The record gives the reactivity of an RNA of 177 nucleotides to 2A3. 2A3 adducts were read by reverse transcription with SuperScript II with manganese. The 2A3 profile rests on 727 reads. The data come from the RNA Mapping Database (RMDB), library OK1LIB. Conditions: 150 mM KOAc, 10 mM MgCl2 and 150 mM bicine (pH 8.5), 24 C.
RNA sequence: GGGAACGACUCGAGUAGAGUCGAAAACUGAUGUGAUGAAUGAAGUAACGACCGAGGUCGUGAUUGUCUUCAUAACUGAGGUAAUAACAUACUUCAAACUAACUUCAUAACCUACUUCAACCUAACGCGACGUACGUCACUUCGGUGACGUACGUCGAAAAGAAACAACAACAACAAC
Reactivity to 2A3 in 0.01 (KOAc 150mM, MgCl2 10mM, bicine 150mM(pH8.5), 24C), signal-to-noise 1, nucleotides 027 to 126: c050u030g010a040u070g080u100g020a000u100g010a020a100u010g000a030a030g000u020a060a170c040g000a000c000c000g000a110g020g000u010c030g000u000g040a030u000u110g070u100c160u010u010c080a000u010a080a000c000u000g010a000g000g010u000a000a070u210a050a000c010a020u080a000c000u020u070c000a100a040a140c060u060a010a010c000u000u000c000a010u080a110a080c010c000u030a110c000u140u160c000a090a090c000c040u300a220a000c030g010